Description:
The record gives the reactivity of an RNA of 177 nucleotides to 2A3. It was measured as part of the RMDB library OK1LIB.
RNA sequence: GGGAACGACUCGAGUAGAGUCGAAAAGCUCGGAGACGAGCAAGGCUGACAAAACCUUGUCCCAACCUCCACGUGGUGUCGGCUGGAUAAUGCUGCAUUAUGUUGCAUUUAUCAACUGGGAAGAAAACAGCAGGACCCACUUCGGUGGGUCCUGCUGAAAAGAAACAACAACAACAAC
Reactivity to 2A3 in 0.01 (KOAc 150mM, MgCl2 10mM, bicine 150mM(pH8.5), 24C), signal-to-noise 1, nucleotides 027 to 126: g000c010u000c000g000g010a080g000a000c000g000a000g000c000a000a000g000g000c000u040g010a050c020a000a050a040a040c000c020u000u080g020u050c000c000c000a000a030c000c000u000c060c010a060c170g060u190g000g100u020g020u000c000g000g010c000u050g000g010a000u000a000a000u020g060c000u020g000c000a060u110u090a120u300g030u000u040g000c000a000u060u120u000a030u030c000a030a030c030u020g090g060g000a000a100g060a010a090a000a000